[RMDB]
RNA sequence: GGGAACGACUCGAGUAGAGUCGAAAAUUGAUAGACUCGCAAACUAAUGGCUUGAGUUAUGUGUCUUUAGUUUGUUAAAUGAAGACAUAACCUAUGGACGUAGACAAAUAUGUUGGCAGGUGUUUGGACGUGGGUUCGACUCCCACCGGCUCCAUCAGGAUAGGUAUCUGUUCGCAGAUACCUAUCCAAAAGAAACAACAACAACAAC
Reactivity to 2A3 in 0.01 (KOAc 150mM, MgCl2 10mM, bicine 150mM(pH8.5), 24C), signal-to-noise 1, nucleotides 027 to 156: u060u060g020a000u020a100g030a030c020u000c040g000c050a040a020a000c020u050a120a000u060g060g000c000u020u040g060a000g090u190u110a110u140g000u000g050u000c020u000u000u050a080g020u000u010u120g060u030u100a080a120a110u190g080a010a010g060a040c010a090u030a000a000c000c020u080a120u040g050g000a020c020g050u090a000g010a080c020a040a070a030u190a070u140g120u080u040g080g040c090a020g040g060u050g150u110u110u110g050g000a000c030g000u010g000g000g030u000u040c020g020a000c000u030c010c010c010a010c060c000g130g030c050u080c040c010a030u040c060a030
An RNA of 207 nucleotides, treated with 2A3 and read out base by base. The 2A3 profile rests on 493 reads.